[RMDB]
RNA sequence: GGGAACGACUCGAGUAGAGUCGAAAAGAUUGUAAAGAAAGAAUGAAGGAUUGGAAGAGUGUGAGGAGACGCUGAGCAAACGGCCUUCAAAUCGAAAGUGGUGUGAGUCAUGGGCGCUGCCACCAUCUAUGCGAAAAGCCCACCAAGCAUUGGUCAAUCCUCGGUAUAUCUUCGGAUAUACCGAGGAAAAAGAAACAACAACAACAAC
Reactivity to DMS in 0.01 (KOAc 150mM, MgCl2 10mM, bicine 150mM(pH8.5), 24C), signal-to-noise 1, nucleotides 027 to 156: g040a150u010u000g040u030a100a150a140g000a040a040a130g010a190a110u000g020a090a130g010g010a090u000u000g020g010a060a120g000a090g070u000g000u000g000a160g020g040a180g010a090c060g040c020u000g040a180g050c100a020a060a030c020g020g000c060c000u000u020c080a050a130a030u000c100g010a080a100a050g040u000g000g000u000g000u010g010a060g020u020c050a120u010g000g010g050c120g030c030u020g030c000c000a040c000c020a040u000c110u020a070u000g000c140g000a070a040a100a140g000c060c010c000a200c040c020a100a180g060c070a120u000u000g020g030u000c040a040a160
Reactivity to 2A3 in 0.01 (KOAc 150mM, MgCl2 10mM, bicine 150mM(pH8.5), 24C), signal-to-noise 1, nucleotides 027 to 156: g020a080u140u190g040u180a000a050a130g040a100a080a030g050a040a050u090g000a040a030g050g030a110u010u130g040g050a060a010g040a040g080u120g000u040g010a000g030g070a000g000a010c030g000c050u080g010a000g040c050a110a080a000c050g030g000c010c030u110u130c050a120a120a110u100c020g130a040a080a080g000u010g060g020u040g050u080g030a020g000u020c000a080u030g010g000g000c020g020c030u090g010c010c000a000c010c000a030u030c080u170a060u100g070c000g110a010a010a000a050g000c070c000c000a010c010c010a060a010g000c010a050u030u130g030g000u030c000a010a100